[RMDB]
RNA sequence: GGGAACGACUCGAGUAGAGUCGAAAAGAUGGGUCCGAUGGAUUAAUGCGUCGCCGGCCAUUGGAUCCUGAUUGAUAGAUUGACGGCGACGGUCGGAUCACUCGGUAAUUCGGUGCUCUACGAGUGAUCCGUGAUGAUAGUUAAGAUGAGCACCUAAAAUUAUGAGCGGUUUCGACCGCUCAUAAUUAAAAGAAACAACAACAACAAC
Reactivity to 2A3 in 0.01 (KOAc 150mM, MgCl2 10mM, bicine 150mM(pH8.5), 24C), signal-to-noise 1, nucleotides 027 to 156: g090a040u140g000g000g000u000c000c000g030a000u000g010g000a020u050u260a170a130u300g030c000g020u000c010g000c000c010g000g030c000c010a000u000u000g010g000a000u000c000c000u000g020a030u030u210g020a050u100a230g160a180u010u210g090a020c010g020g000c000g010a000c000g010g000u010c000g000g000a000u000c000a000c010u000c020g010g010u040a040a040u260u100c080g010g020u000g000c000u000c000u010a000c000g000a030g000u030g000a010u000c000c000g000u010g000a060u040g030a010u040a230g210u300u160a090a000g000a110u080g000a000g000c010a000c000c000u020a020a020